[RMDB]
RNA sequence: GGGAACGACUCGAGUAGAGUCGAAAACGCUUAUGAGGACGCCCCGGCCGCUAUGGAACACAUGCCGACUCUUCUGGGCGUCGGGUUCCAGCAUCCUCGUGGAAUGGGCAUGCGUGGCGAAUCGCCAACGCAGUCGAUCGUUCGCGAUCGACUGCGUAAAAGAAACAACAACAACAAC
Reactivity to DMS in 0.01 (KOAc 150mM, MgCl2 10mM, bicine 150mM(pH8.5), 24C), signal-to-noise 2, nucleotides 027 to 126: c130g000c080u010u000a080u010g000a060g010g010a080c080g040c030c030c030c060g010g000c050c080g050c070u000a070u010g000g010a040a080c080a120c120a090u030g030c080c010g010a060c070u000c050u000u000c160u000g020g000g020c050g010u000c040g020g000g020u000u010c020c030a090g000c030a100u000c030c030u000c040g020u000g010g000a060a060u000g000g000g000c040a050u000g020c020g010u000g010g010c040g020a150a130u010c050g020c000c030a000
Reactivity to 2A3 in 0.01 (KOAc 150mM, MgCl2 10mM, bicine 150mM(pH8.5), 24C), signal-to-noise 2, nucleotides 027 to 126: c020g000c040u190u150a080u220g020a020g060g030a020c050g020c000c020c000c010g010g060c000c040g000c100u110a100u110g040g040a050a030c040a020c010a140u170g060c000c030g070a090c040u010c000u220u050c100u260g140g000g000c030g010u010c000g020g020g000u000u000c020c000a010g060c030a050u010c010c010u040c040g080u110g030g060a190a150u140g000g060g000c040a060u040g010c010g000u030g000g010c020g050a110a130u120c050g000c040c020a020